RNA sequence: GGGAACGACUCGAGUAGAGUCGAAAAACGAUGGCCGUAUAUCGGCCCAAAAGGUACGUCCGAGACUAGGACGUUAAUAGGCCCGGAGUCUAAGCGUAGAAAUACGUGGAGCUGAAAAUAAAACAAAACCUGAUACUAGGUUCGCCUAGUAUCAGGUAAAAGAAACAACAACAACAAC
Reactivity to DMS in 0.01 (KOAc 150mM, MgCl2 10mM, bicine 150mM(pH8.5), 24C), signal-to-noise 2, nucleotides 027 to 126: a210c070g000a130u000g010g010c000c000g030u000a130u000a050u010c030g010g000c000c010c160a020a020a060a080g000g010u030a010c010g000u000c000c010g010a260g000a070c090u000a250g020g000a010c000g020u000u000a020a100u000a080g000g000c000c010c020g010g000a080g000u000c030u010a110a130g000c010g000u000a000g000a160a080a110u010a010c010g000u000g010g000a190g000c050u000g010a050a050a070a070u000a040a070a050a050c150a030a030a080
Reactivity to 2A3 in 0.01 (KOAc 150mM, MgCl2 10mM, bicine 150mM(pH8.5), 24C), signal-to-noise 1, nucleotides 027 to 126: a030c060g060a080u100g000g010c020c010g030u120a200u020a050u300c000g000g000c000c010c000a050a120a000a030g040g010u060a000c010g010u000c000c010g060a050g060a100c080u010a050g010g000a010c000g010u010u020a060a020u050a050g110g000c030c010c020g030g070a040g030u000c010u090a070a040g000c010g010u000a000g020a010a060a050u060a030c000g000u040g010g000a030g060c030u040g040a000a000a090a030u160a020a120a030a010c060a030a110a000